[RMDB]
RNA sequence: GGGAACGACUCGAGUAGAGUCGAAAAGCGUACUACCUCCCUUGGAUUUAGAGCGGGAGGCUAUGUUAGUACUAGUCCCAAAUAGGACUAGGAACCCAUAGCCGACGAUCGCUCUUGUCAGGGAGGUAUCGCAAAGCCAACGCUUCGGCGUUGGCAACAUUUCACUAGUCUUCGGACUAGUGAAAUGAAAAGAAACAACAACAACAAC
Reactivity to DMS in 0.01 (KOAc 150mM, MgCl2 10mM, bicine 150mM(pH8.5), 24C), signal-to-noise 2, nucleotides 027 to 156: g040c030g050u010a100c110u010a000c010c010u020c000c000c020u000u020g090g060a050u020u000u010a000g020a040g020c020g020g000g020a200g020g000c000u000a000u030g000u010u020a200g000u030a250c010u010a050g010u010c000c010c040a060a110a300u000a040g020g020a010c000u010a000g000g030a200a110c240c300c010a000u000a080g030c000c000g050a070c160g010a060u020c000g020c000u000c000u000u010g010u000c000a040g030g000g000a050g030g000u000a000u000c010g010c050a070a090a170g000c030c010a040a010c000g030c000u000u000c300g040g030c000g030u020u010g010g000c060a010a010
Reactivity to 2A3 in 0.01 (KOAc 150mM, MgCl2 10mM, bicine 150mM(pH8.5), 24C), signal-to-noise 2, nucleotides 027 to 156: g000c010g080u090a170c050u000a020c000c010u040c050c010c010u030u200g260g010a080u300u300u120a000g000a000g000c010g000g000g000a010g000g000c000u000a000u000g010u010u000a000g000u000a000c000u000a000g010u020c020c030c010a060a060a090u300a070g000g000a000c000u000a000g010g030a010a010c000c010c010a000u000a020g000c010c010g110a180c000g010a030u030c010g000c010u000c010u000u010g000u000c010a010g000g010g000a000g060g010u000a000u020c000g010c000a100a060a000g010c020c000a000a000c010g030c010u060u090c290g180g000c000g000u020u000g000g000c010a000a000
Structure probing data (DMS and 2A3) for a 207-nucleotide construct. The DMS profile rests on 2,463 reads. Values cover nucleotides 27 to 156. For DMS the reverse transcriptase was MarathonRT.